Structure probing data (2A3 and DMS) for a 207-nucleotide construct.
DMS adducts were read by reverse transcription with MarathonRT.
For 2A3, 2,889 sequencing reads were counted.
For DMS, 4,668 sequencing reads were counted.
RNA sequence: GGGAACGACUCGAGUAGAGUCGAAAACACCGGAUUCGUCCGGUGAAAAACCGUAGGAUCCUGUGGCCACAGAGAUAUCUGGUUCGAAAGAGCCAAAUAUCGACGAAGUGGCGUAACAUCAGGAUCCUAAACGGAAAAAACUCAGUUCGCUGAGUAAUGUUUCAAGUAGUUUCGACUACUUGAAACAAAAAGAAACAACAACAACAAC
Reactivity to 2A3 in 0.01 (KOAc 150mM, MgCl2 10mM, bicine 150mM(pH8.5), 24C), signal-to-noise 3, nucleotides 027 to 156: c000a000c000c000g010g000a010u050u070c150g110u010c100c000g020g000u010g000a000a020a000a030a000c000c000g000u010a010g000g000a000u000c000c010u010g010u020g020g010c000c000a000c000a010g030a010g010a020u000a010u000c020u010g010g020u010u010c010g040a120a100a080g000a010g010c000c000a000a000a000u000a000u010c030g070a130c020g110a220a050g000u000g000g000c010g020u090a080a050c010a110u200c010a020g000g000a000u000c000c000u000a000a000a010c010g020g060a020a030a020a200a010a000c000u000c000a010g060u090u060c160g070c110u010g000a000g010u040a020a080
Reactivity to DMS in 0.01 (KOAc 150mM, MgCl2 10mM, bicine 150mM(pH8.5), 24C), signal-to-noise 2, nucleotides 027 to 156: c020a040c010c010g020g010a110u000u000c280g060u010c010c000g040g010u000g010a010a040a100a090a070c010c000g010u000a060g030g030a010u000c000c000u010g000u000g020g020c010c000a040c010a140g010a300g010a000u000a000u000c000u000g000g010u000u000c000g010a200a130a160g000a030g010c000c000a000a000a010u000a020u000c000g000a300c130g000a170a210g020u000g000g010c000g010u000a040a090c050a100u000c010a040g000g020a020u000c000c000u000a000a020a090c020g010g000a020a040a040a120a140a050c010u000c000a010g030u000u010c300g000c010u010g000a020g020u000a060a140

The RNA was probed in 150 mM KOAc, 10 mM MgCl2 and 150 mM bicine (pH 8.5) at 24 C.
2A3 adducts were read by reverse transcription with SuperScript II with manganese.